Chemical mapping of a 207-nucleotide RNA with 2A3.
[RMDB]
RNA sequence: GGGAACGACUCGAGUAGAGUCGAAAAGUAGGAGUGGAUUGUAAAAUAUAAACAGCGCCACACAUUAGUCUUAGCAUGCUGGAUAUACAGCCUGAAGACUAUAUAAGUGUUGAUGUCGCUAUUCAAGAAGUUAUUGAUGAUAUGCAUUGGUGUGAUGGAAUUUCCCAACAUUCGUGUUGGGAAAUUCAAAAGAAACAACAACAACAAC
Reactivity to 2A3 in 0.01 (KOAc 150mM, MgCl2 10mM, bicine 150mM(pH8.5), 24C), signal-to-noise 2, nucleotides 027 to 156: g040u040a010g030g030a040g030u030g010g030a050u070u060g040u110a050a070a130a060u120a020u040a000a170a010c050a030g000c000g000c010c020a000c000a000c000a000u010u020a000g000u010c000u020u040a060g080c010a040u040g000c000u000g010g020a040u060a050u070a270c000a000g000c000c000u010g030a010a000g000a000c000u020a000u020a030u040a140a090g010u000g040u050u070g020a110u040g110u110c010g000c010u020a040u050u130c040a030a010g020a050a020g060u120u070a080u070u060g040a020u030g000a010u000a030u190g050c040a030u000u060g020g010u030g020u020g040a080u090g050
Values cover nucleotides 27 to 156. The reactions ran in a buffer of 150 mM KOAc, 10 mM MgCl2 and 150 mM bicine (pH 8.5), at 24 C.